Structure probing data (DMS and 2A3) for a 177-nucleotide construct. For 2A3 the reverse transcriptase was SuperScript II with manganese. The DMS profile rests on 6,880 reads. DMS adducts were read by reverse transcription with MarathonRT. Values cover nucleotides 27 to 126.
RNA sequence: GGGAACGACUCGAGUAGAGUCGAAAAUCGAUGGCGUUCGCGCCAUCGAAGAGCCGUACCGCGUAGCACGCGGAUAGGUGUGAAGAUAUCCAAGGCCAUGGAGGAGGCGUGCUUUCGAGCACGCCAAUAGCAUUACAUCUUUCGAGAUGUAAUGCUAAAAAGAAACAACAACAACAAC
Reactivity to DMS in 0.01 (KOAc 150mM, MgCl2 10mM, bicine 150mM(pH8.5), 24C), signal-to-noise 6, nucleotides 027 to 126: u000c000g000a020u000g010g010c000g030u000u020c210g030c020g030c000c000a000u010c000g010a000a060g000a170g000c000c000g010u000a300c010c010g010c000g010u010a150g030c110a300c030g000c020g000g010a070u010a050g010g020u010g010u010g010a080a080g010a110u000a080u000c010c020a040a060g010g010c030c040a150u000g000g010a050g010g010a170g000g010c000g020u000g000c000u000u000u010c140g010a030g010c000a000c000g010c000c000a020a030
Reactivity to 2A3 in 0.01 (KOAc 150mM, MgCl2 10mM, bicine 150mM(pH8.5), 24C), signal-to-noise 6, nucleotides 027 to 126: u020c000g000a000u000g010g010c000g020u030u050c250g000c010g020c090c000a000u000c010g000a000a000g000a010g010c000c020g070u140a050c010c010g010c010g040u030a050g140c190a030c110g010c010g020g000a020u170a040g000g000u030g040u070g120a080a060g040a120u080a050u080c020c010a010a010g080g010c010c020a050u060g030g030a030g010g090a050g010g000c010g000u010g000c010u110u050u120c210g020a010g010c020a000c000g000c000c000a000a000